[RMDB]
RNA sequence: GGGAACGACUCGAGUAGAGUCGAAAAAUACCGAAUCAUACUGGUAUCCAGGGCUCAAUGUAAAAGUAUGCACAUGCACACGUCAGUACACGGAAUCACAUACAUCACCGGGGUCAUAUGCUGAGCCAUCUGCCACAUCGGGGGCUAUGUUCAGAACCGUCAAUGCAUGAUUCGUCAUGCAUUGACGAAAAGAAACAACAACAACAAC
Reactivity to 2A3 in 0.01 (KOAc 150mM, MgCl2 10mM, bicine 150mM(pH8.5), 24C), signal-to-noise 2, nucleotides 027 to 156: a000u080a040c050c000g010a060a130u210c050a010u140a090c030u000g050g000u070a070u010c040c020a050g010g060g020c020u030c030a030a060u100g050u100a070a140a010a140g030u040a010u050g070c100a020c050a090u220g020c010a000c000a000c090g090u100c020a020g080u050a070c010a010c100g060g100a070a050u190c000a020c030a150u160a020c030a050u110c020a040c030c000g020g000g010g000u060c010a040u030a030u140g030c040u050g000a040g000c000c010a000u000c000u030g000c000c010a120c000a160u120c080g030g000g000g000g000c040u060a040u090g000u030u020c030a010g040a160a070c020
An RNA of 207 nucleotides, treated with 2A3 and read out base by base. Conditions: 150 mM KOAc, 10 mM MgCl2 and 150 mM bicine (pH 8.5), 24 C. 2A3 adducts were read by reverse transcription with SuperScript II with manganese. Values cover nucleotides 27 to 156. It was measured as part of the RMDB library OK3TST.